[RMDB]
RNA sequence: GGGAACGACUCGAGUAGAGUCGAAAACCUACUCAAUACGGCCUCGUCGUACAGAACGGUAACAUGUUUUCCGAACAUCCGCGCUUGGGUAUACGAGUAUACACCUUACCCAACCCUCGCCAACGGGAGUGCAUCCACGAGUUCGCUCGUGGAUGAAACCUUCGUAUACAUUCGUGUAUACGAAGGUAAAAGAAACAACAACAACAAC
Reactivity to 2A3 in 0.01 (KOAc 150mM, MgCl2 10mM, bicine 150mM(pH8.5), 24C), signal-to-noise 7, nucleotides 027 to 156: c000c000u020a040c040u050c050a050a130u070a110c020g050g000c000c070u080c070g030u020c020g010u070a060c040a110g100a130a020c030g070g000u100a070a040c050a150u130g050u050u040u050u060c030c030g020a040a010c030a090u060c010c030g040c010g020c070u020u040g000g010g020u040a050u030a080c100g020a030g100u040a030u040a100c110a090c030c030u060u090a050c010c010c000a030a040c030c000c000u050c030g020c020c020a070a050c030g010g020g030a050g040u100g030c000a000u000c000c000a000c000g010a000g000u080u070c150g080c090u000c000g000u000g000g000a000u000g000a000a000
Reactivity to DMS in 0.01 (KOAc 150mM, MgCl2 10mM, bicine 150mM(pH8.5), 24C), signal-to-noise 2, nucleotides 027 to 156: c030c000u010a080c050u010c030a160a170u000a070c030g010g000c030c020u000c070g000u030c030g000u000a080c060a080g010a070a080c040g010g020u010a090a110c100a140u000g030u000u000u010u010c020c030g010a080a140c030a070u000c020c020g000c030g010c030u000u010g050g010g010u000a040u010a120c060g010a090g050u000a100u000a070c130a080c080c050u010u000a030c000c010c010a070a080c020c000c000u000c150g020c030c040a080a070c030g010g010g000a130g000u010g010c010a020u000c000c000a010c000g000a030g020u000u000c280g040c030u000c000g040u000g000g010a010u000g000a010a080
Source information:
Structure probing data (2A3 and DMS) for a 207-nucleotide construct. 2A3 adducts were read by reverse transcription with SuperScript II with manganese. For DMS, 5,680 sequencing reads were counted. It was measured as part of the RMDB library M2RFPK. For DMS the reverse transcriptase was MarathonRT. The reactions ran in a buffer of 150 mM KOAc, 10 mM MgCl2 and 150 mM bicine (pH 8.5), at 24 C.